This 207-nucleotide RNA was probed chemically with DMS and 2A3. The RNA was probed in 150 mM KOAc, 10 mM MgCl2 and 150 mM bicine (pH 8.5) at 24 C. Values are in units of 0.01, from 0 to 300, in steps of 10. For 2A3 the reverse transcriptase was SuperScript II with manganese. For DMS the reverse transcriptase was MarathonRT. The 2A3 profile rests on 1,361 reads.
RNA sequence: GGGAACGACUCGAGUAGAGUCGAAAACAACGAUCGCUCAUGGUCCGUUGUUCGCGACACCCCAGGUGUGACCAGCUUCGUUGGCAACGAGGGCAACGCCACCCCAGUGAAGCACCGUGACGUCGCUAAGUUCCUCAUGCCUCAGGAGGCUACCGAACAUUAGGGGACGAUUCGUCGUCCCCUAAUGAAAAGAAACAACAACAACAAC
Reactivity to DMS in 0.01 (KOAc 150mM, MgCl2 10mM, bicine 150mM(pH8.5), 24C), signal-to-noise 2, nucleotides 027 to 156: c050a050a000c020g020a030u000c020g030c140u010c210a060u010g070g000u000c010c050g050u010u000g020u000u000c040g000c040g000a090c060a180c040c010c020c040a130g010g050u010g020u000g020a110c060c010a220g010c050u000u000c060g020u020u000g000g000c030a160a070c020g030a110g000g000g010c020a070a070c030g010c020c030a110c000c020c000c010a300g000u010g000a100a220g000c030a020c040c010g030u010g000a080c100g020u000c030g000c040u000a140a100g020u000u000c010c000u000c030a140u000g000c020c050u000c070a230g020g010a160g000g010c030u000a130c060c030g000a290a300
Reactivity to 2A3 in 0.01 (KOAc 150mM, MgCl2 10mM, bicine 150mM(pH8.5), 24C), signal-to-noise 2, nucleotides 027 to 156: c000a000a000c000g020a020u000c000g000c200u140c190a230u300g000g000u040c110c060g020u000u000g000u030u030c060g020c010g020a000c000a010c040c020c000c050a040g000g000u010g060u030g020a080c000c110a020g000c010u040u050c030g010u020u060g020g000c090a100a040c060g040a190g070g040g000c050a120a050c100g050c020c000a030c000c020c000c010a010g020u030g080a050a010g020c010a010c030c030g050u010g040a030c040g050u000c000g000c050u040a110a010g030u030u020c000c000u050c050a040u060g020c000c000u050c000a130g110g040a020g160g000c020u100a120c040c040g170a050a050